RNA sequence: GGGAACGACUCGAGUAGAGUCGAAAACGGUGGCCAACAGUGUGGCACGGAAGCAUGGGUUCCUCAACCUGGGCCAGGUAGGUGUUCCCCCACAGGACACUGCCAGGGGGUGGGACCAGAGAAGACAGUUAUGUCAUCGAUUCGUCGAUGACAUAACAAAAGAAACAACAACAACAAC
Reactivity to 2A3 in 0.01 (KOAc 150mM, MgCl2 10mM, bicine 150mM(pH8.5), 24C), signal-to-noise 3, nucleotides 027 to 126: c060g130g230u130g100g070c020c010a080a130c140a270g180u080g030u050g240g000c040a000c040g020g040a060a010g070c090a100u160g020g050g020u000u020c010c000u020c000a010a030c000c010u000g030g020g010c060c080a080g090g080u120a070g000g050u020g030u110u110c000c000c000c030c000a050c010a030g000g010a000c010a010c040u050g040c020c010a010g000g000g020g000g000u050g000g020g000a020c000c010a000g040a000g000a050a020g080a020c060a020
Reactivity to DMS in 0.01 (KOAc 150mM, MgCl2 10mM, bicine 150mM(pH8.5), 24C), signal-to-noise 3, nucleotides 027 to 126: c060g010g000u000g020g020c040c040a050a160c140a150g020u010g030u000g000g000c060a050c030g000g010a080a080g000c090a100u010g010g010g000u000u000c010c010u020c030a030a040c010c010u000g000g000g010c110c080a100g020g020u000a060g020g000u000g000u000u000c010c010c030c060c150a080c170a150g010g010a040c040a030c020u000g000c010c010a040g000g000g000g000g000u000g000g000g000a010c010c020a100g000a080g000a090a090g010a110c130a100
This 177-nucleotide RNA was probed chemically with 2A3 and DMS. The data come from the RNA Mapping Database (RMDB), library OK2TRN. Values are in units of 0.01, from 0 to 300, in steps of 10. 2A3 adducts were read by reverse transcription with SuperScript II with manganese.